Source information: The data come from the RNA Mapping Database (RMDB), library M2PK50. Chemical mapping of a 177-nucleotide RNA with DMS and 2A3. The RNA was probed in 150 mM KOAc, 10 mM MgCl2 and 150 mM bicine (pH 8.5) at 24 C. For 2A3, 4,457 sequencing reads were counted.
RNA sequence: GGGAACGACUCGAGUAGAGUCGAAAACUGUGCAUGUUCGCAUGCACAGAAAUGCGUCACAGGCGAUUGACGCAAUAAUUAUGAUGGUAGGAUCGCCUGUCAAAAGCGGGUCCUUCGGGACCCGCAACAAAUUAGCUAACUUCGGUUAGCUAAUUUGAAAAGAAACAACAACAACAAC
Reactivity to DMS in 0.01 (KOAc 150mM, MgCl2 10mM, bicine 150mM(pH8.5), 24C), signal-to-noise 4, nucleotides 027 to 126: c010u000g010u000g000c000a000u000g010u010u020c180g030c000a010u000g000c000a000c010a010g000a040a070a050u010g010c080g010u000c060a050c050a040g010g000c010g000a030u000u000g010a070c030g010c020a060a050u000a070a080u010u010a100u010g000a090u010g010g010u000a080g010g000a030u000c000g010c000c000u000g010u010c260a070a040a120a100g020c000g010g000g010u000c000c000u000u000c170g030g020g000a010c000c000c000g010c000a000a020
Reactivity to 2A3 in 0.01 (KOAc 150mM, MgCl2 10mM, bicine 150mM(pH8.5), 24C), signal-to-noise 3, nucleotides 027 to 126: c000u010g000u000g010c000a000u000g010u040u110c200g030c160a000u000g000c010a000c000a000g000a000a000a030u130g020c030g090u070c060a010c020a020g000g030c020g020a020u000u100g070a040c030g010c050a010a070u120a040a010u140u260a100u190g190a060u110g080g170u130a090g090g060a010u000c000g010c000c000u000g040u030c010a020a030a010a010g000c020g000g000g030u000c000c020u040u080c150g040g000g000a000c000c030c000g010c000a000a000